[RMDB]
RNA sequence: GGGAACGACUCGAGUAGAGUCGAAAAAAAGAAAUGAGAGGAGACAGCUGUGUGGGUAUCUAAGGGGAGAGCAUUCCCGGAAAAGGUAACUGGCAAUGCAAAGACCCUGAGUCAGGUACAUGUUUGGUGAGUUCAUGGAACAGCAGAGAGUCCAGGCAGUACUCAAAGCAUUCGUGCUUUGAGUACUAAAAGAAACAACAACAACAAC
Reactivity to 2A3 in 0.01 (KOAc 150mM, MgCl2 10mM, bicine 150mM(pH8.5), 24C), signal-to-noise 1, nucleotides 027 to 156: a000a000a000g080a050a110a030u170g000a100g010a000g040g010a010g020a080c020a050g040c060u040g000u000g020u070g130g010g050u060a050u030c020u090a100a050g000g000g000g000a130g000a000g020c010a010u000u040c000c000c000g050g010a050a040a080a020g100g000u070a080a000c030u030g010g010c030a030a010u080g030c020a000a000a070g130a100c000c000c000u000g040a020g060u090c030a000g000g060u030a020c020a020u080g020u030u070u120g040g000u010g030a040g010u000u050c050a050u100g050g040a040a040c000a060g000c030a000g030a010g030a010g040u000c030c000a020g000g090c020
Reactivity to DMS in 0.01 (KOAc 150mM, MgCl2 10mM, bicine 150mM(pH8.5), 24C), signal-to-noise 1, nucleotides 027 to 156: a010a030a080g000a140a050a060u010g000a130g000a120g010g010a140g020a070c030a050g050c040u040g040u010g040u000g000g040g000u000a090u010c070u010a100a090g020g010g000g010a080g040a150g000c010a070u000u010c030c000c010g030g000a070a100a040a070g010g010u000a050a090c040u020g030g070c040a030a060u000g010c000a040a080a120g000a120c040c010c040u000g040a140g040u000c040a020g010g000u000a060c050a070u000g030u000u000u000g020g020u000g010a090g000u000u000c010a030u000g000g010a070a040c030a090g010c000a100g000a100g000a080g030u000c010c030a060g020g010c110
Background:
The record gives the reactivity of an RNA of 207 nucleotides to 2A3 and DMS. Conditions: 150 mM KOAc, 10 mM MgCl2 and 150 mM bicine (pH 8.5), 24 C. The 2A3 profile rests on 694 reads. For DMS the reverse transcriptase was MarathonRT. It was measured as part of the RMDB library OK3TST.